The data come from the RNA Mapping Database (RMDB), library OK2TRN.
An RNA of 177 nucleotides, treated with DMS and read out base by base.
The reactions ran in a buffer of 150 mM KOAc, 10 mM MgCl2 and 150 mM bicine (pH 8.5), at 24 C.
[RMDB]
RNA sequence: GGGAACGACUCGAGUAGAGUCGAAAAGGGAAUCAAAACGGUAUGCUGACCGAAUUCAUCUUCCAAGUACCGAUAAUUACUUUCGGAACCGUAUCCGGCAUCGGCAACGAUGGUGUGACCUAACACACUAGUACCGUCGAUUCGUCGACGGUACUAGAAAAGAAACAACAACAACAAC
Reactivity to DMS in 0.01 (KOAc 150mM, MgCl2 10mM, bicine 150mM(pH8.5), 24C), signal-to-noise 3, nucleotides 027 to 126: g020g020g000a090a050u030c060a030a080a110a150c060g020g000u000a030u000g020c140u020g010a080c010c040g000a060a020u000u000c080a100u010c090u000u000c020c020a040a110g000u000a060c120c090g040a040u020a070a090u000u000a060c150u000u010u000c070g010g000a040a050c160c090g020u020a130u010c040c000g020g000c080a090u010c060g010g020c140a040a120c080g020a060u000g010g030u010g010u000g000a110c050c080u000a040a090c050a020c110a120